[RMDB]
This 177-nucleotide RNA was probed chemically with DMS and 2A3. DMS (dimethyl sulfate) methylates the pairing face of unpaired adenines and cytosines. Values are in units of 0.01, from 0 to 300, in steps of 10. For DMS the reverse transcriptase was MarathonRT. 2A3 adducts were read by reverse transcription with SuperScript II with manganese. The reactions ran in a buffer of 150 mM KOAc, 10 mM MgCl2 and 150 mM bicine (pH 8.5), at 24 C. The DMS profile rests on 4,594 reads. It was measured as part of the RMDB library 15KREP.
RNA sequence: GGGAACGACUCGAGUAGAGUCGAAAAAAGUUGAUAUGGAUUUACUCCGAGGGGACGAACUACCACGAACAGGGGAAACUCUACCCGUGGCGUCUCCGUUUGACGAGUAAGUCCUAAGUCAACAAAACAAUAUCUAAUUGUUCGCAAUUAGAUAUUGAAAAGAAACAACAACAACAAC
Reactivity to DMS in 0.01 (KOAc 150mM, MgCl2 10mM, bicine 150mM(pH8.5), 24C), signal-to-noise 5, nucleotides 027 to 126: a070a070g000u000u000g000a010u000a020u010g000g000a020u000u000u000a010c000u000c000c020g010a050g020g010g000g010a010c010g000a070a030c050u010a300c000c010a010c010g000a030a190c160a150g000g010g000g010a010a000a020c000u000c000u000a140c300c290c000g010u000g000g000c010g010u000c000u000c010c000g000u000u000u010g000a200c300g000a020g010u000a010a010g000u000c000c000u000a000a050g000u000c000a010a010c000a090a060a070a090
Reactivity to 2A3 in 0.01 (KOAc 150mM, MgCl2 10mM, bicine 150mM(pH8.5), 24C), signal-to-noise 2, nucleotides 027 to 126: a010a020g000u000u000g000a000u000a010u030g000g000a000u010u000u010a000c000u000c000c010g010a040g010g000g000g030a000c010g000a020a010c050u180a050c140c010a000c000g010a030a020c030a070g040g000g000g010a000a000a000c000u000c000u010a020c010c010c000g000u000g000g000c000g000u000c000u000c000c000g010u140u090u040g010a000c000g000a000g000u000a000a000g000u000c000c000u000a000a000g000u000c000a000a000c020a000a040a000a010